[RMDB]
RNA sequence: GGGAACGACUCGAGUAGAGUCGAAAAGUACGGUACGUACGUACGUACAGUACAGCCAUGCGGUACAGUGGUACUCCAUGGAUCUAGUAUAUCGGAUCCUGCUAGGAUCGUGCUAGCGAUCUCGGUAUCGACUCUAUUCGUUCGCGAAUAGAGUCGAAAAAGAAACAACAACAACAAC
Reactivity to DMS in 0.01 (KOAc 150mM, MgCl2 10mM, bicine 150mM(pH8.5), 24C), signal-to-noise 5, nucleotides 027 to 126: g010u000a000c000g010g020u000a000c000g010u010a170c300g010u010a020c000g010u000a000c010a050g010u000a010c000a200g010c020c010a000u000g010c300g000g000u000a000c010a300g010u020g020g020u000a010c000u000c280c000a010u000g000g000a090u010c080u000a090g000u010a070u000a020u010c060g000g000a010u000c020c190u010g010c040u000a020g010g010a160u000c250g010u020g000c020u010a000g010c040g000a030u000c000u000c010g020g010u000a020
Reactivity to 2A3 in 0.01 (KOAc 150mM, MgCl2 10mM, bicine 150mM(pH8.5), 24C), signal-to-noise 5, nucleotides 027 to 126: g000u010a000c030g000g000u000a010c000g010u030a030c150g110u160a010c010g000u020a000c000a000g000u000a010c010a010g000c010c000a010u030g010c090g000g020u030a000c030a180g270u300g280g000u190a010c020u000c030c000a010u000g000g020a020u020c030u080a090g140u090a060u000a010u110c030g030g020a000u020c000c080u090g020c030u030a040g030g060a210u200c120g070u180g070c020u020a000g010c010g030a010u010c140u080c080g020g000u030a060